[RMDB]
RNA sequence: GGGAACGACUCGAGUAGAGUCGAAAAGUGGCGCGAGCCGUCUGCUCCAUUGCGACAACGAGCGAGACCCCGGCCGCGGGCGCCGCGGGACGGCCCGCGCGAGCGGGAGGACGGCGGGGCGAUAGCAAACACAUUUGUUAUUCGUAACAAAUGUGUUAAAAGAAACAACAACAACAAC
Reactivity to 2A3 in 0.01 (KOAc 150mM, MgCl2 10mM, bicine 150mM(pH8.5), 24C), signal-to-noise 8, nucleotides 027 to 126: g090u070g040g000c010g000c020g030a020g010c010c000g000u010c020u050g020c010u000c020c030a160u100u260g060c060g080a080c070a170a070c060g020a030g030c030g030a060g060a150c000c000c020c000g040g080c030c010g050c020g010g030g010c120g010c010c020g030c050g010g040g030a040c020g070g010c000c000c000g000c000g000c010g000a040g030c010g010g010g000a040g030g010a030c010g020g010c050g000g020g010g010c020g010a040u090a040g070c060a030
Reactivity to DMS in 0.01 (KOAc 150mM, MgCl2 10mM, bicine 150mM(pH8.5), 24C), signal-to-noise 9, nucleotides 027 to 126: g010u010g010g000c020g010c050g000a240g010c000c010g010u000c010u020g000c020u010c010c170a190u020u020g000c080g020a100c120a090a150c260g000a040g000c030g010a150g010a280c070c010c010c020g000g010c030c020g020c040g000g000g020c160g010c060c020g010c120g000g000g010a090c040g000g010c010c000c000g020c000g020c110g000a060g010c020g000g000g010a150g010g000a050c020g010g010c030g000g010g000g000c030g000a060u020a080g000c100a100
The record gives the reactivity of an RNA of 177 nucleotides to 2A3 and DMS. DMS adducts were read by reverse transcription with MarathonRT. It was measured as part of the RMDB libraries RFM100 and RFMREP. DMS (dimethyl sulfate) methylates the pairing face of unpaired adenines and cytosines.